This 177-nucleotide RNA was probed chemically with 2A3 and DMS. For 2A3, 828 sequencing reads were counted. 2A3 adducts were read by reverse transcription with SuperScript II with manganese. The data come from the RNA Mapping Database (RMDB), library OK1LIB.
[RMDB]
RNA sequence: GGGAACGACUCGAGUAGAGUCGAAAAAUCGGGUAGCCGCACUGGUCGGCUUCGUUCCGACGGAGCCGGUCUGGACCCGCGUUACACGCGAGACAGAGCCGGUGGCCGCCAUUCCCGAACGAUGGACAUAUCGGAGUCGUUUCGACGACUCCGAUAUAAAAGAAACAACAACAACAAC
Reactivity to 2A3 in 0.01 (KOAc 150mM, MgCl2 10mM, bicine 150mM(pH8.5), 24C), signal-to-noise 2, nucleotides 027 to 126: a020u060c000g110g030g000u050a000g000c010c000g050c000a040c280u220g140g010u150c000g020g000c000u020u000c030g020u040u010c000c000g000a000c000g000g000a020g010c000c000g020g000u030c020u020g050g110a220c000c000c000g000c000g060u070u260a140c230a060c080g000c000g020a030g010a060c000a040g060a000g080c000c000g070g000u050g040g110c000c000g010c000c000a070u060u000c000c000c040g020a230a120c110g080a080u220g030g060a010c070
Reactivity to DMS in 0.01 (KOAc 150mM, MgCl2 10mM, bicine 150mM(pH8.5), 24C), signal-to-noise 2, nucleotides 027 to 126: a050u000c070g010g000g000u000a090g010c000c010g000c000a200c100u010g010g000u020c010g000g000c000u000u000c080g000u020u000c070c090g000a040c090g000g010a300g030c000c000g020g000u040c010u010g000g000a210c000c080c040g010c050g020u020u040a150c190a300c000g020c040g010a000g010a100c030a010g000a300g000c020c000g100g010u000g030g010c000c000g000c070c050a070u000u010c000c020c000g010a130a170c230g010a130u020g030g000a120c150